[RMDB]
RNA sequence: GGGAACGACUCGAGUAGAGUCGAAAAUUUACGGUAUUCGUACCGUAAACGAGCAAGCAAGCAGCGCAACGAGUCAAGACGAUAAUAAGAUCGAGCAUGCUGAUAGUAGGAUCUUCGGAUCCUACAAGAUCUUGGUCCAUUUCGAUGGACCAAGAUCAAAAGAAACAACAACAACAAC
Reactivity to DMS in 0.01 (KOAc 150mM, MgCl2 10mM, bicine 150mM(pH8.5), 24C), signal-to-noise 2, nucleotides 027 to 126: u000u000u000a000c010g020g000u010a020u000u010c270g020u000a010c000c000g010u000a000a010a040c130g020a060g010c130a110a050g000c100a090a100g000c020a060g050c090g020c040a050a120c060g000a110g000u030c040a110a100g000a080c110g000a040u000a040a110u010a110a060g000a030u000c010g010a090g010c050a120u000g000c060u030g000a080u020a100g010u000a000g000g000a010u000c010u000u010c210g050g000a000u000c000c020u000a000c000a060a090
Reactivity to 2A3 in 0.01 (KOAc 150mM, MgCl2 10mM, bicine 150mM(pH8.5), 24C), signal-to-noise 1, nucleotides 027 to 126: u020u000u000a000c020g000g000u010a010u000u110c230g060u040a040c000c000g000u000a010a010a010c010g060a040g110c050a030a010g000c020a070a020g000c020a000g050c040g030c130a050a130c050g040a000g070u030c050a060a040g100a100c080g060a050u110a240a040u110a230a000g070a110u050c000g010a020g000c010a030u090g000c000u050g040a040u080a080g000u000a000g000g000a000u000c020u000u040c180g040g000a020u000c000c010u010a000c010a020a000